The record gives the reactivity of an RNA of 177 nucleotides to 2A3 and DMS. Reactivities are rounded to 0.1 and cut off at 0 and 3. The reactions ran in a buffer of 150 mM KOAc, 10 mM MgCl2 and 150 mM bicine (pH 8.5), at 24 C. The 2A3 profile rests on 7,411 reads.

RNA sequence: GGGAACGACUCGAGUAGAGUCGAAAAUGUGUUCAUAAAAAAUAACAGGGAAAAAGAUGUGCGCCCACACAUGUCCGCAUCGCCUCCUCCGUCUCUGCGCACAAAAUAACAAAUCUCUUCUGCCCCAAUAGACAUGUACUUUCGAGUACAUGUCUAUAAAAGAAACAACAACAACAAC
Reactivity to 2A3 in 0.01 (KOAc 150mM, MgCl2 10mM, bicine 150mM(pH8.5), 24C), signal-to-noise 7, nucleotides 027 to 126: u080g040u010g030u080u080c080a070u300a120a140a040a020a030a020u180a130a080c060a070g070g050g020a080a100a040a040a000g090a060u060g020u030g030c030g020c010c020c000a020c000a000c000a020u050g040u020c010c020g010c030a040u050c020g020c030c020u030c010c010u030c010c020g030u010c010u010c010u030g040c030g010c060a010c020a030a130a030a010u120a060a020c050a040a080a110u040c020u010c000u060u010c020u050g040c000c000c000c010a010
Reactivity to DMS in 0.01 (KOAc 150mM, MgCl2 10mM, bicine 150mM(pH8.5), 24C), signal-to-noise 5, nucleotides 027 to 126: u030g010u010g010u000u000c070a120u030a000a030a090a100a060a040u030a050a070c100a060g000g000g010a070a060a060a080a110g000a080u000g000u010g000c020g010c000c030c020a100c060a030c030a070u010g000u010c050c030g020c050a040u000c030g000c020c020u000c030c020u000c030c020g010u000c010u010c030u000g010c040g020c040a030c070a060a020a060a060u040a050a080c120a040a070a110u010c040u000c020u010u010c020u000g010c050c000c010c050a090